[RMDB]
RNA sequence: GGGAACGACUCGAGUAGAGUCGAAAAGCUCCUGAUUGUCCAAACGCAAUUCUCGAGUCUCUGGCUCCGGCCGAGAGUUGCGUCUGGACGUCCCGAGCCAAAAUGCUGAUGUCUUCGGACAUCAGCAGUAAACUUUCCAGUUCGCUGGAAAGUUUACAAAAGAAACAACAACAACAAC
Reactivity to 2A3 in 0.01 (KOAc 150mM, MgCl2 10mM, bicine 150mM(pH8.5), 24C), signal-to-noise 3, nucleotides 027 to 126: g000c010u020c000c010u030g020a040u060u300g000u030c000c010a030a000a000c000g000c000a000a000u010u010c000u000c000g080a170g050u010c030u030c080u130g120g030c030u000c050c030g000g010c010c010g010a000g000a000g010u000u000g000c030g000u010c010u010g000g000a000c010g000u000c000c000c030g000a010g010c010c010a120a130a030a090u100g000c000u000g000a010u000g000u000c010u020u100c260g060g000a000c010a010u000c000a000g020c000a000
Reactivity to DMS in 0.01 (KOAc 150mM, MgCl2 10mM, bicine 150mM(pH8.5), 24C), signal-to-noise 2, nucleotides 027 to 126: g000c020u010c000c040u000g000a040u000u020g020u010c000c000a010a040a010c010g010c000a000a020u000u000c000u000c000g000a120g020u000c030u010c140u000g010g000c040u000c070c170g000g000c030c010g010a020g000a030g020u000u000g000c010g010u010c030u000g020g010a000c000g000u000c000c020c080g000a010g030c020c160a080a090a090a150u000g010c000u000g010a010u000g000u000c000u000u000c260g020g020a030c010a000u000c000a010g020c000a010
This 177-nucleotide RNA was probed chemically with 2A3 and DMS. The RNA was probed in 150 mM KOAc, 10 mM MgCl2 and 150 mM bicine (pH 8.5) at 24 C. 2A3 adducts were read by reverse transcription with SuperScript II with manganese. For DMS, 2,070 sequencing reads were counted. The 2A3 profile rests on 3,839 reads.